[RMDB]
RNA sequence: GGGAACGACUCGAGUAGAGUCGAAAAGUCGCCGCGUCAACAUCAACGCCCAGCGCGGGCGAGGGAUGCGUCCUACGGGGGUGACCCAUUCGCCGGCAUGGUAGAGGACGGCAAGAUUGCCGCGACGCAGUCGCCUCGACUUCGGUCGAGGCGACUGAAAAGAAACAACAACAACAAC
Reactivity to DMS in 0.01 (KOAc 150mM, MgCl2 10mM, bicine 150mM(pH8.5), 24C), signal-to-noise 2, nucleotides 027 to 126: g020u000c000g050c030c070g020c010g020u010c010a060a110c040a070u010c050a120a100c100g050c000c020c000a250g020c240g040c180g000g010g000c000g010a060g020g010g020a010u000g000c020g030u010c010c020u020a120c170g020g000g000g020g030u000g000a130c050c010c020a090u020u000c010g000c010c000g000g010c170a070u000g020g020u010a130g000a130g000g000a030c030g000g030c220a050a070g000a080u000u010g010c030c040g000c010g010a020c040g020
Reactivity to 2A3 in 0.01 (KOAc 150mM, MgCl2 10mM, bicine 150mM(pH8.5), 24C), signal-to-noise 1, nucleotides 027 to 126: g050u020c020g000c040c010g000c010g000u020c030a050a070c000a070u030c030a040a030c040g000c000c000c010a060g180c270g030c120g180g000g010c010g000a070g090g070g030a000u000g030c000g020u000c000c040u050a120c090g020g020g030g030g000u070g070a000c030c020c000a050u070u060c010g020c040c000g010g180c110a080u110g040g060u060a090g000a040g050g060a010c020g000g040c040a020a040g090a070u160u270g010c030c020g000c020g020a000c000g000

Structure probing data (DMS and 2A3) for a 177-nucleotide construct. 2A3 is a SHAPE reagent: it acylates the 2'-hydroxyl of flexible nucleotides of all four kinds. Reactivities are given for positions 27 through 126. The DMS profile rests on 1,254 reads.